An RNA of 207 nucleotides, treated with 2A3 and read out base by base. As a SHAPE reagent, 2A3 marks flexible, mostly unpaired nucleotides at the ribose 2'-OH. Values cover nucleotides 27 to 156. It was measured as part of the RMDB library RNAMAK.
RNA sequence: GGGAACGACUCGAGUAGAGUCGAAAACACUGACCCUUCGGGGUCAGUGAAAAAAGCGUACUACUUAGCCUAUAAUCUAUCCCAGUUUCGAUCCCAAAUAGGAUGCUGGAUAGGUAGGCUAAGUAUCGCAAAAAAAGUGAUGGUUCGCCAUCACUAAGUUGUUUGUGAUGUUCGCAUCACAAACAACAAAAGAAACAACAACAACAAC
Reactivity to 2A3 in 0.01 (KOAc 150mM, MgCl2 10mM, bicine 150mM(pH8.5), 24C), signal-to-noise 2, nucleotides 027 to 156: c000a000c000u000g000a000c000c000c020u030u070c300g010g020g000g000u000c000a020g010u000g000a100a000a000a000a000a000g060c070g050u170a100c080u000a010c000u040u000a000g000c000c010u020a050u050a200a180u230c000u010a000u080c000c000c050a010g000u080u020u240c160g120a020u030c000c010c020a200a300a070u290a170g030g030a010u100g000c000u000g000g010a000u000a000g030g000u000a000g010g000c010u000a000a000g000u000a000u000c000g000c010a090a000a090a000a000a000a000g010u010g010a010u010g010g050u050u100c220g000c060c000a020u030c000a000c010u040a030a120
For 2A3, 848 sequencing reads were counted.